[RMDB]
RNA sequence: GGGAACGACUCGAGUAGAGUCGAAAAGCUAAGAGCCUAAAAUGUUCUUGCAGAGGACCAGAGUCCAGUUCCAGCACUGUGCCUCCCACCCCAGGGUAUCUGAUGUCCUUUGCUGGACUCCACAGGAUAAAUUAAUGGGGUUCGCCCCAUUAAUUUAAAAAGAAACAACAACAACAAC
Reactivity to 2A3 in 0.01 (KOAc 150mM, MgCl2 10mM, bicine 150mM(pH8.5), 24C), signal-to-noise 2, nucleotides 027 to 126: g040c040u060a110a000g020a070g130c030c040u070a080a090a110a070u150g020u060u040c030u020u030g010c000a010g010a040g020g040a010c010c010a020g000a000g050u010c040c050a050g050u070u040c050c010a020g020c000a010c030u070g010u080g050c020c010u050c020c000c020a030c000c000c000c010a010g050g020g000u010a120u050c020u050g060a110u090g110u100c020c020u000u020u070g000c030u010g010g010a010c000u020c020c010a080c030a060g120g040a060
Reactivity to DMS in 0.01 (KOAc 150mM, MgCl2 10mM, bicine 150mM(pH8.5), 24C), signal-to-noise 4, nucleotides 027 to 126: g020c050u010a070a090g000a110g010c000c040u000a060a070a140a110u010g000u000u000c000u010u010g010c040a060g000a090g010g010a050c030c060a070g000a070g010u000c040c040a070g010u000u010c070c080a070g000c070a070c050u000g010u000g010c040c060u000c020c030c050a230c050c010c010c030a110g010g000g020u010a060u000c040u000g020a130u000g000u000c010c020u000u000u000g000c040u000g000g010a030c030u000c050c100a090c140a090g000g010a170